Conditions: 150 mM KOAc, 10 mM MgCl2 and 150 mM bicine (pH 8.5), 24 C. An RNA of 207 nucleotides, treated with DMS and 2A3 and read out base by base. The DMS profile rests on 1,724 reads. Values cover nucleotides 27 to 156. It was measured as part of the RMDB library M2RFPK.
RNA sequence: GGGAACGACUCGAGUAGAGUCGAAAAGCACAAGACUUCGAACAUUAUAGCAGUUAGUAGUUGCCUAAAGCCAUUGCAAUAUAUGGGACAGUAGAGGUCGCAAGCCUAUACUGUGCGGUGAACAUUCAAAAGGGAUGGUACUUCGGUACCAUCCCAACUUACCCUUCGGGUUCGCCCGAAGGGUAAGAAAAGAAACAACAACAACAAC
Reactivity to DMS in 0.01 (KOAc 150mM, MgCl2 10mM, bicine 150mM(pH8.5), 24C), signal-to-noise 1, nucleotides 027 to 156: g040c010a130c010a060a140g000a120c020u000u010c040g040a070a120c070a100u000u000a090u040a060g000c040a070g010u000u020a130g020u010a110g010u010u020g020c020c040u010a070a130a170g010c050c050a040u010u010g010c050a140a160u010a050u000a060u010g060g020g000a040c010a010g010u000a030g010a010g130g010u010c040g030c300a110a190g020c010c010u000a060u010a000c060u000g000u080g000c020g140g000u020g040a050a070c050a100u000u000c050a040a080a070a190g040g000g000a040u000g000g070u000a020c000u000u010c300g040g000u000a000c000c000a010u010c000c000c000a000a010
Reactivity to 2A3 in 0.01 (KOAc 150mM, MgCl2 10mM, bicine 150mM(pH8.5), 24C), signal-to-noise 2, nucleotides 027 to 156: g020c010a010c010a040a060g110a050c030u130u220c180g120a240a060c060a110u260u160a060u230a080g030c050a000g020u010u090a060g030u100a000g030u090u030g040c010c020u050a060a010a010g050c010c010a020u020u060g060c020a030a000u050a000u020a020u210g000g050g000a000c000a000g000u000a020g000a000g010g000u110c020g010c160a030a000g020c000c000u000a000u010a010c000u020g000u000g060c020g000g000u040g060a060a020c020a060u020u300c120a200a090a020a160g000g020g000a010u000g000g010u000a010c010u020u090c190g040g050u030a000c000c000a020u000c000c000c000a000a000